RNA sequence: GGGAACGACUCGAGUAGAGUCGAAAAGCAGGGAGUCUAUUGGGUCGGUGCCACACCCAAAGCCCAUUGCCCCACGUCGGAAACACUAGAAGGACACCUGUUCACCAGGACCCAUGAUCACAGGGUGCGCAAGGUUGUAUUUCGAUACAACCUUGCGAAAAGAAACAACAACAACAAC
Reactivity to DMS in 0.01 (KOAc 150mM, MgCl2 10mM, bicine 150mM(pH8.5), 24C), signal-to-noise 2, nucleotides 027 to 126: g020c050a010g020g010g000a100g030u000c050u010a010u000u010g000g010g020u000c070g020g030u100g010c080c080a030c040a180c000c040c050a020a030a120g020c110c000c040a070u030u000g000c000c000c010c040a060c110g000u040c060g030g060a120a090a120c100a070c040u000a100g020a160a120g030g020a030c040a050c050c070u020g030u000u020c100a100c080c050a040g010g000a080c020c000c020a140u050g000a140u000c060a060c110a090g030g000g040u000g000
Reactivity to 2A3 in 0.01 (KOAc 150mM, MgCl2 10mM, bicine 150mM(pH8.5), 24C), signal-to-noise 4, nucleotides 027 to 126: g040c040a030g000g030g030a140g040u100c030u070a240u100u060g000g000g000u080c090g020g050u030g080c020c000a050c010a010c030c000c000a040a020a010g020c010c010c000a030u030u150g030c000c000c010c000a040c040g070u070c020g070g050a150a100a030c040a120c080u080a090g100a120a040g110g030a040c000a040c020c030u000g050u080u110c030a060c080c000a020g000g060a020c000c000c010a070u130g050a060u110c030a020c030a110g060g000g030u050g030
Chemical mapping of a 177-nucleotide RNA with DMS and 2A3. For 2A3 the reverse transcriptase was SuperScript II with manganese. For 2A3, 2,299 sequencing reads were counted. The reactions ran in a buffer of 150 mM KOAc, 10 mM MgCl2 and 150 mM bicine (pH 8.5), at 24 C. Reactivities are given for positions 27 through 126. The data come from the RNA Mapping Database (RMDB), library OK1LIB.